[RMDB]
RNA sequence: GGGAACGACUCGAGUAGAGUCGAAAAAGUCACCAUUACGAUGGUGACAAAUAAGCUCUAUGAUGUUAUUUUACAUAUGUUAGACUAAUGAAAUGAUUUGAUUGUAAUUUAGUAACUGAGCUUAUAACGUUCUUGUACGUUUCGACGUACAAGAACGAAAAGAAACAACAACAACAAC
Reactivity to DMS in 0.01 (KOAc 150mM, MgCl2 10mM, bicine 150mM(pH8.5), 24C), signal-to-noise 2, nucleotides 027 to 126: a060g020u000c010a010c000c000a000u000u010a110c180g000a070u020g030g020u000g000a000c000a020a050a030u000a000a010g020c010u000c020u010a260u020g000a090u010g000u000u000a030u010u000u000u000a010c010a070u000a080u010g010u000u060a050g010a100c070u020a040a050u020g010a120a100a080u000g000a070u000u010u010g000a050u000u000g000u000a010a010u010u010u000a010g000u010a040a060c100u000g000a010g010c000u000u010a000u030a060a150
Reactivity to 2A3 in 0.01 (KOAc 150mM, MgCl2 10mM, bicine 150mM(pH8.5), 24C), signal-to-noise 6, nucleotides 027 to 126: a000g000u000c000a010c000c010a000u030u050a080c240g090a020u000g000g000u000g010a000c000a000a000a010u000a000a000g000c000u000c020u020a120u130g150a190u060g100u040u010a050u020u040u020u010a020c020a020u110a030u150g090u100u090a090g040a110c080u160a160a150u200g120a150a050a090u120g050a170u100u140u180g080a100u020u060g010u000a000a040u020u000u040a020g000u010a010a010c040u000g000a000g000c000u010u010a030u030a060a020